Overview
The record gives the reactivity of an RNA of 177 nucleotides to 2A3 and DMS. The DMS profile rests on 988 reads. 2A3 adducts were read by reverse transcription with SuperScript II with manganese. High 2A3 reactivity points to a flexible backbone, as in loops and unpaired stretches.
[RMDB]
RNA sequence: GGGAACGACUCGAGUAGAGUCGAAAAGGGUGAAAUGAAUGUCAUGAGCAGCCACCACUCUGCAGCACAACUCCACAUCCAGGCAUGGUGGGGAGCCCUACUUAUACUUGGAGGUGUCCUGGCACCCGGUACGACCACAAUUCGUUGUGGUCGUACCAAAAGAAACAACAACAACAAC
Reactivity to 2A3 in 0.01 (KOAc 150mM, MgCl2 10mM, bicine 150mM(pH8.5), 24C), signal-to-noise 1, nucleotides 027 to 126: g070g040g030u030g060a020a060a110u100g050a140a020u080g070u070c110a060u070g050a040g050c010a010g060c020c030a020c000c030a020c020u000c020u000g030c030a000g050c040a000c020a040a210c010u040c030c010a010c000a070u040c040c010a000g070g000c080a050u170g060g030u070g000g020g000g010a030g040c030c000c010u090a110c070u280u260a060u040a230c030u060u030g130g020a110g010g020u020g000u070c010c000u030g000g030c010a040c010c010c000
Reactivity to DMS in 0.01 (KOAc 150mM, MgCl2 10mM, bicine 150mM(pH8.5), 24C), signal-to-noise 1, nucleotides 027 to 126: g000g030g030u010g000a090a050a090u000g000a090a100u010g000u010c090a080u010g040a110g000c040a080g000c080c030a050c060c050a060c040u000c050u010g000c080a080g010c100a090c070a090a100c070u000c040c000a040c030a170u000c000c010a000g000g000c130a030u000g000g000u000g000g000g010g020a180g000c020c030c020u000a050c090u000u020a110u010a090c080u000u030g000g000a140g010g030u000g020u000c010c040u010g020g000c070a030c010c000c010